[RMDB]
RNA sequence: GGGAACGACUCGAGUAGAGUCGAAAAUAUUCCUUCGGGAAUAUGAUGGAUAUGGAACGAUGCUAGGAAAUGAUCUCUCAUCGUACUCGGAAACGAGUACGUGCGAUCACUUCCUUGGACCAUCGUUCCUAAGUCUCUGGCCUCCUUUCGAGGAGAAUGUUAACGCUAUAUUCGUAUAGCGUUAACAAAAAGAAACAACAACAACAAC
Reactivity to 2A3 in 0.01 (KOAc 150mM, MgCl2 10mM, bicine 150mM(pH8.5), 24C), signal-to-noise 6, nucleotides 027 to 156: u010a010u000u000c010c000u010u050c250g100g000g000a000a000u010a020u060g080a120u170g050g040a050u070a090u220g000g000a000a000c000g000a000u010g020c020u020a000g000g010a010a010a010u010g000a010u000c030u000c020u030c070a100u090c060g000u000a000c000u000c000g010g020a060a090a070c010g000a000g000u000a000c000g000u010g000c030g010a000u000c000a000c010u000u000c000c000u010u060g030g050a030c070c010a000u000c000g000u000u000c000c000u000a010a010g010u000c010u000c040u150g180g010c020c010u010c010c010u100u120u140c250g100a030g010g040a010g070a040a120
Reactivity to DMS in 0.01 (KOAc 150mM, MgCl2 10mM, bicine 150mM(pH8.5), 24C), signal-to-noise 4, nucleotides 027 to 156: u000a000u000u000c010c000u000u020c280g060g030g010a020a010u000a000u000g020a170u000g010g010a140u010a300u000g000g010a010a020c020g000a030u010g020c020u000a040g030g000a030a010a020u000g000a010u000c000u000c090u000c050a200u010c010g020u010a010c000u010c000g000g000a150a150a270c030g000a040g030u000a000c000g010u000g020c300g000a010u000c010a000c000u000u010c010c000u010u010g030g000a110c300c010a010u000c010g000u000u000c010c000u010a000a090g000u000c020u000c040u010g010g000c090c000u010c000c060u000u000u000c150g010a060g000g020a100g000a090a130
About this RNA: Chemical mapping of a 207-nucleotide RNA with 2A3 and DMS. It was measured as part of the RMDB library RNAMAK. Values cover nucleotides 27 to 156. For DMS, 8,802 sequencing reads were counted. 2A3 adducts were read by reverse transcription with SuperScript II with manganese.